About this RNA:
Conditions: 150 mM KOAc, 10 mM MgCl2 and 150 mM bicine (pH 8.5), 24 C. Structure probing data (DMS and 2A3) for a 170-nucleotide construct. DMS adducts were read by reverse transcription with MarathonRT.
RNA sequence: GGGAACGACUCGAGUAGAGUCGAAAAGUUUCUGACUUGUCCCUCAAACAAAAACUCCUUUACACCUUCUAUGGUAAGGAGUCACUUGAGAACCCAACCUACAUUUACCACUCCGCAUUCAUUGAGUUACGACUACGGUUCGCCGUAGUCAAAAGAAACAACAACAACAAC
Reactivity to DMS in 0.01 (KOAc 150mM, MgCl2 10mM, bicine 150mM(pH8.5), 24C), signal-to-noise 9, nucleotides 027 to 129: g020u010u000u080c080u060g000a050c030u000u000g010u000c020c040c010u010c110a100a090a070c150a010a070a030a090a030c010u000c020c010u010u020u050a080c190a060c030c020u020u060c170u040a050u070g000g000u000a060a010g000g010a000g010u000c040a040c080u000u000g010a070g000a120a100c040c020c030a080a060c110c020u020a080c100a110u020u040u000a110c070c030a090c050u020c040c060g010c110a060u000u000c010a050u020u030g000a020g020u020u010a090c210
Reactivity to 2A3 in 0.01 (KOAc 150mM, MgCl2 10mM, bicine 150mM(pH8.5), 24C), signal-to-noise 9, nucleotides 027 to 129: g010u020u040u060c090u100g080a030c020u020u050g040u060c020c030c000u030c050a160a170a090c080a020a060a010a010a000c010u030c000c000u060u110u130a090c080a070c030c010u240u210c100u250a110u300g020g000u010a000a000g000g000a000g000u000c000a030c020u020u040g010a030g020a060a040c000c010c020a030a060c020c030u080a100c060a190u070u100u090a080c030c030a030c030u030c020c030g050c040a050u050u080c020a020u020u130g030a020g060u020u050a060c090

Reactivities are given for positions 27 through 129. 2A3 adducts were read by reverse transcription with SuperScript II with manganese.